Source: RMDB library M2PK90, as collected in RNAgym. The record gives the reactivity of an RNA of 177 nucleotides to DMS. DMS (dimethyl sulfate) methylates the pairing face of unpaired adenines and cytosines. For DMS, 2,241 sequencing reads were counted.
[RMDB]
RNA sequence: GGGAACGACUCGAGUAGAGUCGAAAAAUCUUGGCGAAGUCAGCGCGGAAGGAGCGCGGAACUCCUUACCCUCGCCUUUUUUUUUCCGCUCCCGUUCGCGAAAGCGUUCAGCGGAAAAGGGACCAAACUAAAGUAUCCUCUUCGGAGGAUACUUUAGAAAAGAAACAACAACAACAAC
Reactivity to DMS in 0.01 (KOAc 150mM, MgCl2 10mM, bicine 150mM(pH8.5), 24C), signal-to-noise 3, nucleotides 027 to 126: a040u000c080u010u000g000g010c000g020a040a090g010u000c130a100g010c110g030c220g020g010a050a030g020g000a040g010c020g000c290g000g000a080a080c000u000c000c000u000u000a090c050c020c040u000c050g000c000c000u020u000u010u020u000u000u000u000u030c000c000g010c010u000c130c080c050g000u000u010c010g000c000g000a090a120a170g010c020g020u000u000c050a060g010c010g000g000a000a000a010a010g000g010g000a080c090c080a040a080a170
The reactions ran in a buffer of 150 mM KOAc, 10 mM MgCl2 and 150 mM bicine (pH 8.5), at 24 C.
For DMS the reverse transcriptase was MarathonRT.